[RMDB]
RNA sequence: GGGAACGACUCGAGUAGAGUCGAAAAGACUUUCUAAAUUGAUUCUUGCAUUCGAAUUUACUUCUUGCGUAAUGUCGAUACUCAUGAUUGUAAAAAGGAGAUUGCAAAUUUGAAUCAUGGGAUCCACCUUGCAAUGUGUUUUCGAACACAUUGCAAGAAAAGAAACAACAACAACAAC
Reactivity to DMS in 0.01 (KOAc 150mM, MgCl2 10mM, bicine 150mM(pH8.5), 24C), signal-to-noise 2, nucleotides 027 to 126: g000a180c100u020u000u010c050u000a060a090a110u010u010g000a010u000u000c000u020u000g000c030a030u000u000c000g000a270a170u000u000u000a030c020u000u000c010u000u000g040c180g000u000a030a130u020g030u010c300g010a130u000a030c010u000c010a000u000g000a080u000u000g000u010a020a040a030a090a090g000g000a300g000a020u010u000g000c000a030a030a240u000u000u010g000a010a010u000c000a030u000g010g010g030a050u000c020c030a110c190
Reactivity to 2A3 in 0.01 (KOAc 150mM, MgCl2 10mM, bicine 150mM(pH8.5), 24C), signal-to-noise 2, nucleotides 027 to 126: g030a010c050u070u120u020c070u180a140a250a210u120u010g000a020u030u000c020u050u020g020c010a000u010u030c030g020a060a060u030u000u000a010c010u000u040c010u020u070g000c030g020u030a080a110u190g190u290c100g080a080u040a060c000u050c010a010u000g060a230u000u200g030u090a040a070a000a030a000g120g020a060g000a050u080u000g050c020a000a040a110u120u170u130g030a020a000u000c000a020u010g000g000g060a000u000c010c030a030c050